[RMDB]
RNA sequence: GGGAACGACUCGAGUAGAGUCGAAAACAAGCGUCAGCCGACGAUUGGUAGAACAAACUCGAAAUAUUCCAAGUGCUUGUUUUUUAUGGGGAACUUUCUUCGGCGGAGGCGGUCUUAAACCGAAUGCGGAUCAAUUCUACUUCGGUAGAAUUGAUCCAAAAGAAACAACAACAACAAC
Reactivity to DMS in 0.01 (KOAc 150mM, MgCl2 10mM, bicine 150mM(pH8.5), 24C), signal-to-noise 2, nucleotides 027 to 126: c010a020a010g040c000g050u030c050a080g010c060c030g000a000c030g030a060u000u000g000g050u010a100g040a070a060c130a030a050a110c060u000c070g000a040a170a120u030a140u070u000c060c020a060a030g000u000g000c050u000u000g000u000u000u000u010u040u010a090u050g020g000g040g000a030a200c080u000u020u000c030u000u010c030g000g000c050g020g010a050g000g050c020g020g020u000c070u000u000a050a090a110c060c060g020a100a030u030g000c170
Reactivity to 2A3 in 0.01 (KOAc 150mM, MgCl2 10mM, bicine 150mM(pH8.5), 24C), signal-to-noise 4, nucleotides 027 to 126: c010a030a000g040c000g080u060c030a030g060c030c030g030a040c030g010a020u010u060g030g090u140a060g070a090a010c050a050a070a030c050u010c040g120a070a070a080u220a110u160u120c090c030a120a030g050u050g070c010u030u010g020u040u020u000u020u020u060a210u170g020g000g000g020a020a030c000u030u070u000c010u060u060c030g010g000c000g000g010a030g020g000c020g000g010u030c040u030u200a100a090a050c010c010g020a100a070u130g030c020